[RMDB]
RNA sequence: GGGAACGACUCGAGUAGAGUCGAAAAGAUAUGGAUCCCACUCCCCACCUACUCUACAUGGGAUCGAUGAAACAGCUCGGAAACGAGCUGUGGAGAUCAGUGUAGAGUAGAGGUGGGAUCCUAAGUCCAAAGAAAUCAACUUCGGUUGAUUUCUUUGAAAAGAAACAACAACAACAAC
Reactivity to DMS in 0.01 (KOAc 150mM, MgCl2 10mM, bicine 150mM(pH8.5), 24C), signal-to-noise 3, nucleotides 027 to 126: g000a200u010a170u000g010g000a020u000c000c010c010a030c010u010c160c030c000c060a300c090c010u000a010c000u010c000u000a010c010a020u000g000g000g030a020u010c000g000a100u030g000a170a100a010c010a000g040c000u000c000g020g010a090a100a300c000g000a010g030c010u000g000u000g000g010a050g000a010u000c000a300g000u000g000u000a010g000a010g010u000a000g000a020g040g010u000g000g000g000a000u000c000c000u000a030a070g000u030c160
Reactivity to 2A3 in 0.01 (KOAc 150mM, MgCl2 10mM, bicine 150mM(pH8.5), 24C), signal-to-noise 2, nucleotides 027 to 126: g090a080u300a260u300g020g010a010u000c060c000c000a000c030u190c040c020c030c020a020c020c010u010a010c020u030c000u020a000c000a020u040g140g300g000a010u050c020g250a300u050g020a050a020a000c010a010g000c000u010c000g050g080a070a170a110c000g050a000g000c000u000g000u000g020g010a020g000a000u000c010a000g050u000g000u020a030g030a010g000u010a000g000a000g020g000u000g000g000g000a000u000c000c000u010a020a030g100u050c050
Source: RMDB library TTRINS, as collected in RNAgym. Structure probing data (DMS and 2A3) for a 177-nucleotide construct. For 2A3, 2,760 sequencing reads were counted. DMS (dimethyl sulfate) methylates the pairing face of unpaired adenines and cytosines. The RNA was probed in 150 mM KOAc, 10 mM MgCl2 and 150 mM bicine (pH 8.5) at 24 C.